[RMDB]
Annotation: Chemical mapping of a 177-nucleotide RNA with 2A3 and DMS.
RNA sequence: GGGAACGACUCGAGUAGAGUCGAAAAGAUUAAGUCGACGAGAAUAGUGUAUUCCAUCAACCUCUCAAUUUUAGUUCCGCAGCUCAUAGUGACAUUACCUUUGAAUGAGUAUUUUGCAAGGGCGGGAGUAAUAAGACGCCUUCGGGCGUCUUAUUACAAAAGAAACAACAACAACAAC
Reactivity to 2A3 in 0.01 (KOAc 150mM, MgCl2 10mM, bicine 150mM(pH8.5), 24C), signal-to-noise 2, nucleotides 027 to 126: g070a050u230u130a100a020g110u090c060g030a090c030g000a060g050a020a170u140a070g020u050g000u030a090u190u000c020c010a020u020c020a040a010c010c040u080c000u000c040a140a070u120u070u000u030a110g010u090u000c020c000g000c000a000g020c000u000c000a040u070a090g060u040g090a000c020a070u020u180a120c000c030u170u070u060g160a100a040u020g000a030g010u010a150u040u290u110u080g030c030a040a000g020g010g000c020g000g000g110a020
Reactivity to DMS in 0.01 (KOAc 150mM, MgCl2 10mM, bicine 150mM(pH8.5), 24C), signal-to-noise 1, nucleotides 027 to 126: g000a100u030u040a030a110g010u000c020g000a020c100g040a050g000a030a040u010a110g000u000g000u010a030u000u000c000c050a090u010c020a120a080c080c030u010c030u010c080a060a040u020u010u000u020a030g000u020u010c020c000g010c060a100g000c010u000c020a030u010a050g000u020g000a030c100a000u000u020a020c060c120u020u060u000g000a090a030u000g010a130g000u000a040u030u000u000u010g000c070a100a000g000g000g000c030g060g040g000a070
For 2A3 the reverse transcriptase was SuperScript II with manganese. The DMS profile rests on 1,468 reads. It was measured as part of the RMDB library OK1LIB. Reactivities are given for positions 27 through 126. For 2A3, 479 sequencing reads were counted.